[RMDB]
RNA sequence: GGGAACGACUCGAGUAGAGUCGAAAAAUAUCCACUUGGGUCGCCUCUCGAGUAAUAAGGUACUGCUUGAUCUUCUUCAGCAAUUGGAAGAGAGCGAUAUGGCGUAUCGUUUGGUGGAAAUGCAAGCCUAACUACACAAAUUCGUUUGUGUAGUUAGAAAAGAAACAACAACAACAAC
Reactivity to DMS in 0.01 (KOAc 150mM, MgCl2 10mM, bicine 150mM(pH8.5), 24C), signal-to-noise 9, nucleotides 027 to 126: a100u010a080u000c010c010a050c020u000u000g010g010g010u000c020g010c060c030u000c080u000c030g010a120g010u010a060a100u010a080a110g010g010u000a050c080u010g020c020u000u000g010a120u000c020u000u000c010u000u010c180a090g010c200a090a110u010u000g010g010a020a030g000a050g000a050g010c040g010a080u010a060u010g010g020c050g010u010a020u000c020g010u000u000u000g010g020u000g000g010a040a100a070u010g000c140a080a120g010c140
Reactivity to 2A3 in 0.01 (KOAc 150mM, MgCl2 10mM, bicine 150mM(pH8.5), 24C), signal-to-noise 9, nucleotides 027 to 126: a000u100a050u010c010c010a010c030u020u050g100g000g010u030c000g010c030c010u010c020u020c040g050a060g070u120a060a190u130a200a050g160g010u070a060c030u080g060c010u040u060g050a060u020c010u070u000c010u050u040c050a060g030c070a150a300u190u130g050g010a020a010g020a010g010a010g010c020g010a030u030a070u190g030g000c030g020u080a010u020c030g070u020u090u070g060g010u020g010g070a050a050a020u130g030c050a060a020g010c000
This 177-nucleotide RNA was probed chemically with DMS and 2A3.
It was measured as part of the RMDB library OK2TST.
For 2A3 the reverse transcriptase was SuperScript II with manganese.